Structure probing data (DMS and 2A3) for a 177-nucleotide construct. Conditions: 150 mM KOAc, 10 mM MgCl2 and 150 mM bicine (pH 8.5), 24 C.

RNA sequence: GGGAACGACUCGAGUAGAGUCGAAAAAAGAUCGAACACCUGCCCAUCCCAAUGCGCGUGGGUGACGUGCUUCAGUUCCAGCACACCAAGGCAGGCGUGAACGCUCGUCACGUGGUGACCCGUAUGGGUUCUAUGUUGUCUUCGGACAACAUAGAACAAAAGAAACAACAACAACAAC
Reactivity to DMS in 0.01 (KOAc 150mM, MgCl2 10mM, bicine 150mM(pH8.5), 24C), signal-to-noise 5, nucleotides 027 to 126: a080a050g000a060u000c070g030a120a080c040a050c020c020u000g000c010c010c050a100u010c060c010c030a110a100u010g010c080g020c110g030u020g020g010g020u000g010a050c080g000u000g000c020u000u010c100a200g010u010u010c030c040a080g010c030a030c030a090c120c160a070a080g010g010c020a040g020g010c090g010u010g010a070a080c090g000c040u000c050g000u010c030a040c100g020u010g010g010u000g010a080c020c000c000g020u020a070u010g010g010
Reactivity to 2A3 in 0.01 (KOAc 150mM, MgCl2 10mM, bicine 150mM(pH8.5), 24C), signal-to-noise 3, nucleotides 027 to 126: a000a000g070a040u070c050g040a090a020c000a020c020c020u030g010c000c000c000a050u060c020c010c030a110a120u190g030c080g000c020g050u090g000g050g030u020g020a020c050g000u020g010c030u050u070c060a070g020u070u040c020c000a020g020c020a020c010a010c020c050a060a030g050g000c020a010g030g000c020g020u040g050a090a030c050g000c030u040c040g080u020c020a020c100g080u070g020g050u040g060a020c000c010c020g050u090a170u240g130g010